An RNA of 177 nucleotides, treated with DMS and 2A3 and read out base by base. Values cover nucleotides 27 to 126. High 2A3 reactivity points to a flexible backbone, as in loops and unpaired stretches. For DMS the reverse transcriptase was MarathonRT. It was measured as part of the RMDB library OK1LIB. For 2A3 the reverse transcriptase was SuperScript II with manganese.

RNA sequence: GGGAACGACUCGAGUAGAGUCGAAAACUGCCCUGGGUUUUCGCUGUCUUACAGAAAGAUUGUGCCUAAUUAGUUCGUCUCUUAAUCGGAUGGAAGUUGUGAUAUUUGUAAGGGCGGAUAAUUAACGCGAUAAGUUAUGAUUCGUCAUAAUUUAUCGAAAAGAAACAACAACAACAAC
Reactivity to DMS in 0.01 (KOAc 150mM, MgCl2 10mM, bicine 150mM(pH8.5), 24C), signal-to-noise 9, nucleotides 027 to 126: c080u010g010c010c000c000u010g000g010g010u000u000u000u000c030g020c030u010g000u020c040u010u020a070c100a080g000a100a090a070g010a070u000u010g020u010g010c050c030u010a050a050u010u010a010g020u010u000c030g010u010c010u030c030u010u010a080a100u030c080g000g000a050u000g010g000a040a050g010u010u000g000u000g000a080u000a030u000u000u010g010u010a020a020g000g000g000c000g000g000a020u000a030a030u010u020a050a110c200g010
Reactivity to 2A3 in 0.01 (KOAc 150mM, MgCl2 10mM, bicine 150mM(pH8.5), 24C), signal-to-noise 5, nucleotides 027 to 126: c030u070g000c000c000c000u020g000g000g000u010u000u010u030c010g000c010u010g030u010c010u020u090a050c030a030g160a040a060a000g030a040u010u060g020u030g010c010c020u040a040a030u040u040a010g060u020u030c010g010u000c030u000c000u030u030a060a050u070c020g000g000a030u030g020g010a020a020g000u040u040g000u010g010a020u000a020u000u020u020g020u010a000a000g010g000g000c000g000g000a010u010a000a040u060u040a030a030c070g000